[RMDB]
RNA sequence: GGGAACGACUCGAGUAGAGUCGAAAACACCAGCCGAGAGUGGCGGAACGCUCAGGGUUGAAAUCCCUGUUAUGGUCCUCAACUCUGAGGAUGCAGAACUGCGCUGGAAGUUCACGUGCUUCGUGGCAGCCGAACUAAUCUUCGGAUUAGUUCGGCUAAAAGAAACAACAACAACAAC
Reactivity to DMS in 0.01 (KOAc 150mM, MgCl2 10mM, bicine 150mM(pH8.5), 24C), signal-to-noise 2, nucleotides 027 to 126: c160a250c030c020a130g030c020c030g000a120g020a040g020u000g010g010c060g010g000a060a030c060g010c020u010c000a020g010g020g030u000u010g010a060a170a120u020c120c010c060u010g000u010u020a050u020g000g020u000c220c070u000c000a020a050c070u000c050u000g000a020g000g010a050u000g010c010a020g020a090a150c180u000g020c140g000c040u000g020g010a090a090g010u010u000c010a090c030g020u000g000c020u000u020c060g010u030g000g040c100
Reactivity to 2A3 in 0.01 (KOAc 150mM, MgCl2 10mM, bicine 150mM(pH8.5), 24C), signal-to-noise 1, nucleotides 027 to 126: c030a050c000c010a000g040c020c030g050a050g010a000g040u050g000g050c000g000g020a000a020c060g000c030u000c000a010g060g000g030u010u010g030a050a010a060u150c060c000c000u070g150u100u210a300u300g010g000u070c000c010u030c010a070a090c000u040c070u120g000a000g040g020a040u150g000c000a000g020a230a110c090u100g030c040g000c100u070g050g130a070a030g000u000u030c010a000c070g030u060g060c000u130u200c070g050u140g000g060c000